[RMDB]
RNA sequence: GGGAACGACUCGAGUAGAGUCGAAAAUAUAGCCGGCUAUAAUCGCGAUUAAUAUGCCGCGAUUAAUGCUACGAUUAUACGCGAUUAAUAUCGAUAUUAAUUAGCGCCGGCCGGCCGCGAUCGAUCGGCGAAGUAUAAGUUUCGACUUAUACUUCGCAAAAGAAACAACAACAACAAC
Reactivity to 2A3 in 0.01 (KOAc 150mM, MgCl2 10mM, bicine 150mM(pH8.5), 24C), signal-to-noise 2, nucleotides 027 to 126: u190a020u060a000g010c010c000g000g020c010u040a010u030a200a020u020c010g000c000g030a010u030u050a170a160u160a140u300g050c060c000g010c010g010a000u050u050a060a030u160g000c020u020a090c090g040a000u040u040a020u020a060c200g000c010g030a010u000u210a180a070u110a050u150c020g010a000u000a010u100u060a080a030u010u030a030g010c010g000c060c060g020g000c000c000g000g000c010c030g000c020g000a040u080c020g030a030u110c070g090
Reactivity to DMS in 0.01 (KOAc 150mM, MgCl2 10mM, bicine 150mM(pH8.5), 24C), signal-to-noise 3, nucleotides 027 to 126: u020a080u010a100g030c000c010g010g010c010u000a120u000a020a010u010c000g010c030g020a110u000u000a070a110u020a070u020g010c120c040g010c010g010a030u000u000a030a090u010g020c040u010a090c190g010a040u000u000a020u000a080c140g010c000g010a020u000u000a110a090u010a090u000c060g030a080u000a130u000u000a010a020u000u000a070g000c040g040c120c170g000g000c010c000g010g010c000c030g010c090g000a100u010c100g000a080u000c160g020
Chemical mapping of a 177-nucleotide RNA with 2A3 and DMS. The RNA was probed in 150 mM KOAc, 10 mM MgCl2 and 150 mM bicine (pH 8.5) at 24 C. The DMS profile rests on 2,169 reads.